[RMDB]
RNA sequence: GGGAACGACUCGAGUAGAGUCGAAAACAUUGCAGCUUCGGCUGCAAUGAAUCUCUGGUCUCUACGACACUACUCGAUAGAGGCUGGAGUAGUCGUUCCCGAUGGCGCCCCAAUUCGUUGGGGCGAAAUCGGGUUAAAGAUUCGUCUUUAACCCGAUAAAAGAAACAACAACAACAAC
Reactivity to 2A3 in 0.01 (KOAc 150mM, MgCl2 10mM, bicine 150mM(pH8.5), 24C), signal-to-noise 7, nucleotides 027 to 126: c000a000u000u010g000c000a000g010c010u070u100c220g180g000c000u000g000c000a000a000u000g000a010a020u040c010u000c000u010g000g010u000c000u010c000u010a010c010g070a010c050a090c230u300a130c030u070c020g090a140u010a020g000a000g000g000c000u000g000g000a010g000u010a010g000u000c000g000u000u000c000c000c000g000a130u100g110g080c010g000c000c000c000c000a010a000u030u020c050g020u030u010g000g000g000g000c000g000a000a000
Reactivity to DMS in 0.01 (KOAc 150mM, MgCl2 10mM, bicine 150mM(pH8.5), 24C), signal-to-noise 6, nucleotides 027 to 126: c010a010u000u000g010c000a010g000c000u000u010c200g040g010c000u000g000c000a000a000u000g000a090a080u000c020u000c010u010g010g000u000c000u000c000u000a030c010g000a020c300a140c240u010a090c180u000c010g000a120u000a010g010a020g000g000c010u000g000g000a020g010u000a010g010u000c000g010u000u000c000c000c000g010a070u010g010g010c010g000c000c000c010c000a010a030u000u010c180g010u000u000g000g000g000g020c000g000a000a020